An RNA of 177 nucleotides, treated with DMS and read out base by base. Source: RMDB library OK2TST, as collected in RNAgym. In probing experiments dimethyl sulfate is read out at A N1 and C N3, which are open when not base-paired. The RNA was probed in 150 mM KOAc, 10 mM MgCl2 and 150 mM bicine (pH 8.5) at 24 C. Reactivities are given for positions 27 through 126.

RNA sequence: GGGAACGACUCGAGUAGAGUCGAAAAUGACCACCACCUGUGCCAGCUCGAACAGCGGGCUGUCGGUGCACGGUUCGGUGGCGAACACGUCCAGACCGGCCGCCCGCACGUGGCCGCCGGUGAUCGCAUGAGUAGCUGACUUCGGUCAGCUACUCAUAAAAGAAACAACAACAACAAC
Reactivity to DMS in 0.01 (KOAc 150mM, MgCl2 10mM, bicine 150mM(pH8.5), 24C), signal-to-noise 1, nucleotides 027 to 126: u020g000a100c000c020a040c000c000a080c090c010u000g020u000g010c000c080a100g000c080u000c050g050a190a130c300a140g010c000g020g000g010c010u020g000u010c140g020g010u000g000c070a000c220g000g000u000u020c160g030g000u000g000g010c000g000a130a100c140a080c110g010u010c060c080a280g000a070c010c020g010g050c020c300g000c020c000c000g000c110a110c230g010u000g000g000c020c200g010c000c000g000g020u010g010a050u040c160g010c270